[RMDB]
RNA sequence: GGGAACGACUCGAGUAGAGUCGAAAAAGCGCCUUGAACUAAUUCGUUUAGCCAACUCCAACUGCUCAAGAUCAUGGCACAAAGCACUAACUACUUUAGCAGAUGUUUCAGACUGCAUGACAAGGGGAUAUAUGUGUACGUUCGCGUACACAUAUAUAAAAGAAACAACAACAACAAC
Reactivity to 2A3 in 0.01 (KOAc 150mM, MgCl2 10mM, bicine 150mM(pH8.5), 24C), signal-to-noise 4, nucleotides 027 to 126: a000g060c050g020c010c000u040u070g050a060a010c010u040a120a110u170u150c060g040u070u050u040a020g010c010c010a030a020c040u030c020c010a060a050c030u050g000c000u040c050a050a000g010a100u080c020a060u100g030g020c030a010c090a070a090a010g030c020a020c100u080a130a040c020u080a040c030u110u100u100a020g000c010a030g020a100u060g050u000u060u020c030a070g020a130c030u060g010c050a070u070g030a010c030a070a050g000g000g020g000
Reactivity to DMS in 0.01 (KOAc 150mM, MgCl2 10mM, bicine 150mM(pH8.5), 24C), signal-to-noise 7, nucleotides 027 to 126: a080g020c110g010c050c020u000u010g010a110a140c060u010a070a100u010u000c130g030u010u010u000a080g020c040c050a060a100c060u000c040c030a070a090c060u000g000c040u000c050a050a070g010a080u000c070a070u000g010g010c040a060c090a050a070a080g010c040a050c070u000a070a100c090u010a060c070u000u000u010a070g020c030a030g010a070u000g010u000u000u010c070a080g010a100c040u000g000c030a070u010g010a050c110a070a090g000g000g010g000